Chemical mapping of a 177-nucleotide RNA with 2A3 and DMS. 2A3 is a SHAPE reagent: it acylates the 2'-hydroxyl of flexible nucleotides of all four kinds. The DMS profile rests on 23,759 reads. Conditions: 150 mM KOAc, 10 mM MgCl2 and 150 mM bicine (pH 8.5), 24 C. Values cover nucleotides 27 to 126. Values are in units of 0.01, from 0 to 300, in steps of 10. For DMS the reverse transcriptase was MarathonRT.
RNA sequence: GGGAACGACUCGAGUAGAGUCGAAAAGGCCGAUCGCCUGACGCGCGAUGUCCAUCUGCUGCUGCACCGAGCCUUCCGCGUCGCGGCGGCCGAGCACCUGGAUCAGGUGGUAGCCGUACUCGGUGCAUGCGGCGGAUGGAUUCGUCCAUCCGCCGCAAAAAGAAACAACAACAACAAC
Reactivity to 2A3 in 0.01 (KOAc 150mM, MgCl2 10mM, bicine 150mM(pH8.5), 24C), signal-to-noise 6, nucleotides 027 to 126: g030g010c030c030g110a170u080c030g010c020c050u080g060a040c050g050c010g000c040g070a030u070g050u040c020c020a070u010c020u090g070c030u030g010c010u020g010c010a010c000c000g010a010g050c020c050u170u050c020c020g040c020g170u150c160g000c020g010g010c020g000g000c010c000g000a010g020c000a010c010c000u060g110g150a300u300c050a020g010g010u020g010g240u070a020g020c010c010g020u040a060c020u010c010g020g030u010g000c000a010
Reactivity to DMS in 0.01 (KOAc 150mM, MgCl2 10mM, bicine 150mM(pH8.5), 24C), signal-to-noise 9, nucleotides 027 to 126: g010g020c010c070g010a080u000c070g010c010c090u010g010a090c150g030c290g010c060g000a040u000g010u000c030c030a040u000c030u000g010c050u000g010c070u000g010c000a010c010c000g000a020g020c160c160u010u010c040c020g010c000g010u010c140g020c030g010g010c050g000g000c010c030g010a170g010c020a120c000c010u000g010g020a210u010c050a020g010g010u000g000g010u000a140g000c010c010g010u010a110c010u000c000g010g010u000g000c020a030